Chemical mapping of a 177-nucleotide RNA with 2A3 and DMS. High DMS reactivity at an A or C suggests that its Watson-Crick edge is free. 2A3 adducts were read by reverse transcription with SuperScript II with manganese. It was measured as part of the RMDB library OK1LIB. The 2A3 profile rests on 12,458 reads. The RNA was probed in 150 mM KOAc, 10 mM MgCl2 and 150 mM bicine (pH 8.5) at 24 C.
RNA sequence: GGGAACGACUCGAGUAGAGUCGAAAAACUGUCGAAGUCUAACGUGUCUAUGCAAGAGUCCAUCUUAUCCUAUAUACCAACCUGACCAUCAUGCAGUCACGACCAUUGAUCUAACCGCAUGUCAAACUACCAGCUAAUAGUUCGCUAUUAGCUGGUAAAAAGAAACAACAACAACAAC
Reactivity to 2A3 in 0.01 (KOAc 150mM, MgCl2 10mM, bicine 150mM(pH8.5), 24C), signal-to-noise 9, nucleotides 027 to 126: a000c050u060g040u070c040g080a090a020g040u020c040u070a090a030c060g040u030g040u030c030u060a090u140g030c030a080a040g020a020g110u010c030c010a040u020c030u060u050a050u050c000c030u060a050u030a010u050a230c040c050a060a040c020c020u030g020a050c020c010a030u060c000a000u040g020c010a010g020u030c020a000c060g020a010c010c030a050u010u130g030a030u050c020u050a040a060c050c010g050c060a030u090g050u140c050a010a020a090c030
Reactivity to DMS in 0.01 (KOAc 150mM, MgCl2 10mM, bicine 150mM(pH8.5), 24C), signal-to-noise 5, nucleotides 027 to 126: a060c050u010g000u020c040g000a070a090g000u020c030u010a080a080c090g020u010g010u010c020u000a070u020g030c060a080a090g000a080g000u000c030c030a020u020c050u010u020a040u010c040c030u010a100u040a100u020a070c110c040a040a040c060c010u010g000a080c040c030a030u010c050a040u010g000c040a040g020u000c060a040c130g010a050c040c040a090u010u000g010a070u010c070u010a050a100c030c010g020c050a080u010g010u000c090a030a060a110c170